[RMDB]
RNA sequence: GGGAACGACUCGAGUAGAGUCGAAAACUUAUGUUCGCAUAAGGGGGCUCCUAAGUCGUGCAAAUGAUGUGUAGACCGAUAAGAUUCGGAAACGAAUCUUUUGACGGUCGCAGAUACAUCAUAAGCACGAUAUGGAAUGAUUGGUUUUCGAACCAAAUUUCCAUUCACCUUUCGAGGUGAAUGGAAAAAAAGAAACAACAACAACAAC
Reactivity to 2A3 in 0.01 (KOAc 150mM, MgCl2 10mM, bicine 150mM(pH8.5), 24C), signal-to-noise 1, nucleotides 027 to 156: c040u010u010a000u050g040u110u080c300g000c210a040u080a040a020g020g010g050g010g000c080u000c010c020u100a190a020g040u000c000g000u000g080c000a040a000a260u020g000a000u000g010u010g010u060a080g010a000c000c040g030a030u010a020a010g000a000u000u010c010g040g000a060a060a060c010g010a020a010u000c050u000u010u010u040g160a090c010g010g000u010c000g000c000a000g000a000u090a020c000a000u000c030a000u000a000a000g000c000a000c000g000a000u000a000u030g020g050a010a070u130g070a150u090u120g010g040u030u020u000u140c230g140a050a000c010c000a000a000a090
Reactivity to DMS in 0.01 (KOAc 150mM, MgCl2 10mM, bicine 150mM(pH8.5), 24C), signal-to-noise 1, nucleotides 027 to 156: c050u000u010a000u000g000u010u000c270g070c000a010u000a000a030g000g010g050g020g010c100u000c000c020u020a030a230g000u000c020g100u020g000c010a100a300a050u010g000a020u010g040u000g040u000a120g000a000c000c050g000a220u000a050a000g000a020u000u000c000g000g000a120a070a250c000g040a050a010u000c000u000u000u000u000g010a150c010g000g020u000c000g000c110a150g020a070u000a040c000a010u030c000a010u000a050a300g010c020a010c000g000a000u000a140u000g000g000a100a080u020g040a150u000u000g000g000u000u020u000u000c220g000a110a120c040c040a010a080a190